[RMDB]
RNA sequence: GGGAACGACUCGAGUAGAGUCGAAAAUUUUCUUAUUAUUCCGAGGAUGUUUCCCAGCCAGGGAUUUUCGUCCUCGAGUUUCUUGAUGGUUCUCCUGCUCUUCCGGAGCCUUCUUUCGAGGUCUUCCAAAGUCUAACGUUCGCGUUAGACAAAAGAAACAACAACAACAAC
Reactivity to 2A3 in 0.01 (KOAc 150mM, MgCl2 10mM, bicine 150mM(pH8.5), 24C), signal-to-noise 7, nucleotides 027 to 129: u030u040u020u000c030u050u150a190u130u070a170u210u110c080c010g010a030g010g010a000u010g010u000u020u020c020c000c020a020g150c130c110a090g010g040g000a010u080u040u020u070c010g010u000c010c000u020c010g020a060g020u030u040u010c070u030u090g070a100u110g040g040u040u020c010u030c020c020u060g080c030u010c000u090u000c020c060g010g020a020g010c000c000u030u030c000u050u050u040c020g030a040g040g060u020c020u050u000c020c000a090a030a010
Reactivity to DMS in 0.01 (KOAc 150mM, MgCl2 10mM, bicine 150mM(pH8.5), 24C), signal-to-noise 2, nucleotides 027 to 129: u000u000u000u000c050u020u060a110u050u050a050u060u060c110c030g000a080g000g000a000u020g000u000u000u000c010c000c040a090g000c220c200a150g000g000g000a000u010u020u010u010c040g030u010c000c020u020c000g020a060g030u010u020u020c040u050u050g040a110u050g020g050u020u020c020u040c060c000u020g000c000u000c020u000u000c000c090g030g020a020g000c110c040u050u020c000u010u000u000c040g010a050g030g000u040c070u000u020c010c040a100a090a160